[RMDB]
RNA sequence: GGGAACGACUCGAGUAGAGUCGAAAAAAGAUAUGGAUCCAGCCCGCUCUUGGAUUUAUGGGUCUGUGAUGUAUUCGGAAACGAAUAUGCAUGGCCCAUUGUCAGAGCGGCUGGAUCCUAAGUCAAAGAUAGACUGAGUGUUCGCACUCAGUCUAUCAAAAGAAACAACAACAACAAC
Reactivity to 2A3 in 0.01 (KOAc 150mM, MgCl2 10mM, bicine 150mM(pH8.5), 24C), signal-to-noise 2, nucleotides 027 to 126: a000a020g060a010u110a050u130g010g000a010u010c010c000a000g110c070c070c020g030c010u000c000u120u180g290g020a110u300u300u280a020u020g000g010g050u060c130u100g060u060g060a300u090g040u020a010u000u000c000g020g040a050a080a100c000g000a010a010u030a000u010g040c000a000u040g000g000c000c020c010a000u000u000g000u010c000a010g030a000g000c000g010g010c030u020g000g000a000u000c000c000u000a000a000g000u000c010a000a000a090
Reactivity to DMS in 0.01 (KOAc 150mM, MgCl2 10mM, bicine 150mM(pH8.5), 24C), signal-to-noise 2, nucleotides 027 to 126: a140a070g000a040u000a300u000g010g010a000u000c000c000a030g000c150c020c080g000c000u010c020u010u010g060g000a030u010u000u010a010u020g010g030g010u000c010u000g040u000g010a090u000g010u010a000u000u000c010g010g000a110a140a280c020g010a020a000u000a020u000g030c000a010u000g010g000c000c010c000a010u000u000g010u010c010a020g000a020g020c010g010g010c010u000g000g000a000u000c010c010u000a000a050g000u000c040a130a170a200
An RNA of 177 nucleotides, treated with 2A3 and DMS and read out base by base. The 2A3 profile rests on 2,722 reads. Reactivities are rounded to 0.1 and cut off at 0 and 3. High 2A3 reactivity points to a flexible backbone, as in loops and unpaired stretches. For 2A3 the reverse transcriptase was SuperScript II with manganese. DMS adducts were read by reverse transcription with MarathonRT.